The record gives the reactivity of an RNA of 177 nucleotides to 2A3 and DMS. Reactivities are rounded to 0.1 and cut off at 0 and 3. The reactions ran in a buffer of 150 mM KOAc, 10 mM MgCl2 and 150 mM bicine (pH 8.5), at 24 C. Source: RMDB library M2PK50, as collected in RNAgym. For 2A3, 907 sequencing reads were counted. Reactivities are given for positions 27 through 126.
RNA sequence: GGGAACGACUCGAGUAGAGUCGAAAAUAAAUCUUAUUCGUAAGAUUUACUUGAACGCUGCAAGCGGCAGCGCGCUCGCAUGCGCACGCACGCGCAAUAAAAAUCUGGGGACAUUCGUGUCCCCAAACGUGGUAAUCUGAUUCGUCAGAUUACCACGAAAAGAAACAACAACAACAAC
Reactivity to 2A3 in 0.01 (KOAc 150mM, MgCl2 10mM, bicine 150mM(pH8.5), 24C), signal-to-noise 1, nucleotides 027 to 126: u040a040a040a000u000c010u020u050a030u020u060c050g050u000a000a000g000a000u010u020u000a010c010u030u060g090a060a010c070g010c050u030g030c030a090a300g120c050g200g000c060a010g030c000g000c030g000c000u030c060g060c010a060u070g010c020g010c010a010c030g140c000a020c080g090c000g130c000a020a140u160a080a250a030a040a000u090c050u060g030g040g000g000a000c000a000u020u050c140g060u040g010u010c020c000c000c000a000a000a000
Reactivity to DMS in 0.01 (KOAc 150mM, MgCl2 10mM, bicine 150mM(pH8.5), 24C), signal-to-noise 1, nucleotides 027 to 126: u000a000a000a000u000c010u000u000a050u010u010c170g000u000a010a000g000a020u000u000u000a010c070u010u000g040a170a090c020g010c050u010g000c040a110a120g010c220g010g000c000a040g010c020g000c210g000c040u000c090g000c220a110u000g020c000g020c030a060c150g030c160a020c170g000c010g000c040a030a050u010a020a080a090a050a020u000c200u000g000g000g000g000a010c000a010u000u030c240g010u000g000u000c000c000c000c000a000a010a040